[RMDB]
RNA sequence: GGGAACGACUCGAGUAGAGUCGAAAAGUUCCAAACACAGCUUGGCUCAAAGAUAGUGGUGUCAACCUAACCGACCGCGGAGAAAUCAUUGUGGAUAAACAUGGGUCAACCAAUAUUCCUGGUAUCUUUGCUGCUGGGGACUGUACUGAUUCAGCUAAUGGACUAUACUAUUCGUAGUAUAGUCCAUAAAAGAAACAACAACAACAAC
Reactivity to DMS in 0.01 (KOAc 150mM, MgCl2 10mM, bicine 150mM(pH8.5), 24C), signal-to-noise 3, nucleotides 027 to 156: g020u010u000c000c010a090a140a060c060a050c030a080g040c020u000u010g040g010c030u010c050a120a110a150g020a120u000a060g010u000g000g000u020g000u000c030a080a120c020c050u000a070a120c020c020g010a050c030c040g040c040g000g020a060g010a050a100a060u010c040a090u010u000g040u000g040g000a100u000a060a060a080c050a110u000g000g030g000u000c110a070a160c010c000a040a210u000a060u000u000c040c030u000g020g020u000a070u000c040u000u000u010g020c020u000g030c020u010g040g020g020g010a040c050u000g010u010a300c090u010g000a180u000u000c040a050g030c040u000a120
Reactivity to 2A3 in 0.01 (KOAc 150mM, MgCl2 10mM, bicine 150mM(pH8.5), 24C), signal-to-noise 4, nucleotides 027 to 156: g000u020u000c010c000a060a040a010c070a000c000a010g050c020u030u040g010g010c020u030c060a010a070a030g040a040u080a040g120u040g040g010u050g040u040c030a040a090c010c020u080a080a060c010c050g120a040c040c040g030c040g050g030a060g100a030a120a020u100c040a030u060u170g020u070g040g040a040u100a070a110a000c050a070u070g010g010g050u100c050a050a070c040c010a030a110u080a080u130u140c020c040u040g040g010u050a020u010c010u010u050u060g050c080u010g000c000u010g000g000g000g060a010c020u030g010u070a030c030u040g110a130u060u150c010a000g030c060u130a120